Structure probing data (DMS and 2A3) for a 177-nucleotide construct. The RNA was probed in 150 mM KOAc, 10 mM MgCl2 and 150 mM bicine (pH 8.5) at 24 C. For DMS the reverse transcriptase was MarathonRT. For 2A3, 5,439 sequencing reads were counted.
RNA sequence: GGGAACGACUCGAGUAGAGUCGAAAACACUUAGCGGGGUGCAGAGCAAAUUAUUUGGGCUAGAUGGUGGAGUAUCGACCACCAGUGAGGAUACGGAGCGUCACACAGCGAACGAUGUUAGCAAGAAUCGCAUUGAAUUAUUCGUAAUUCAAUGCGAAAAAGAAACAACAACAACAAC
Reactivity to DMS in 0.01 (KOAc 150mM, MgCl2 10mM, bicine 150mM(pH8.5), 24C), signal-to-noise 7, nucleotides 027 to 126: c080a090c090u000u010a080g020c060g000g000g010g020u010g010c040a040g010a090g020c080a050a060a080u010u010a110u000u000u000g000g000g010c040u010a100g010a100u000g010g020u010g000g000a100g010u010a100u020c160g010a100c020c020a020c010c010a030g010u000g010a110g010g010a080u000a080c120g000g000a090g000c050g020u000c060a050c080a080c110a050g000c050g010a050a070c080g010a090u000g010u000u010a050g020c060a060a090g010a100a120
Reactivity to 2A3 in 0.01 (KOAc 150mM, MgCl2 10mM, bicine 150mM(pH8.5), 24C), signal-to-noise 4, nucleotides 027 to 126: c040a010c040u100u110a030g030c030g000g010g000g020u040g020c030a010g020a010g040c040a010a010a150u150u130a130u060u150u080g030g030g010c030u030a030g020a160u040g030g010u020g020g000a010g020u100a110u160c040g060a060c020c000a000c000c000a020g010u040g030a050g020g000a020u040a100c080g010g020a050g000c010g010u030c000a000c000a010c000a050g040c020g020a040a010c020g020a040u090g030u100u100a030g010c040a060a020g050a090a060